[RMDB]
RNA sequence: GGGAACGACUCGAGUAGAGUCGAAAACAGGACUAUGAGACCCCGAACAUGCAGCAGUAUAUCUUCAACGUGAGGGUAGAAGACGAGCCCCAGGAAGCCACUGUGAUGCUCAUCAUUGUCAACAUUGGCGUGAGUGAUAAUUCGUUAUCACUCACGCAAAAGAAACAACAACAACAAC
Reactivity to 2A3 in 0.01 (KOAc 150mM, MgCl2 10mM, bicine 150mM(pH8.5), 24C), signal-to-noise 1, nucleotides 027 to 126: c000a030g040g080a000c020u030a040u130g020a030g040a110c010c000c000c000g080a080a020c030a060u100g000c000a010g000c010a020g060u030a030u000a010u060c010u070u040c000a070a070c060g150u050g080a130g070g010g000u010a060g030a160a000g090a010c040g010a010g000c000c000c000c000a010g070g010a010a000g010c020c010a040c010u000g000u040g080a080u090g020c030u020c020a020u030c000a030u010u120g030u040c010a030a020c070a140u070u030g120
Reactivity to DMS in 0.01 (KOAc 150mM, MgCl2 10mM, bicine 150mM(pH8.5), 24C), signal-to-noise 2, nucleotides 027 to 126: c150a190g000g020a060c050u010a050u000g000a080g000a140c120c000c050c000g010a070a040c170a060u010g000c050a080g030c050a040g010u010a050u000a060u000c000u020u000c010a050a150c130g020u000g010a070g000g000g010u000a140g000a090a130g010a090c100g000a060g020c040c010c020c040a070g020g010a060a080g000c190c070a030c020u070g020u000g000a060u000g000c020u000c040a070u000c040a050u010u010g020u000c060a070a050c160a140u000u000g020
This 177-nucleotide RNA was probed chemically with 2A3 and DMS. For 2A3 the reverse transcriptase was SuperScript II with manganese. For DMS, 1,069 sequencing reads were counted. Reactivities are given for positions 27 through 126. The data come from the RNA Mapping Database (RMDB), library OK2TST. The RNA was probed in 150 mM KOAc, 10 mM MgCl2 and 150 mM bicine (pH 8.5) at 24 C. The 2A3 profile rests on 1,351 reads.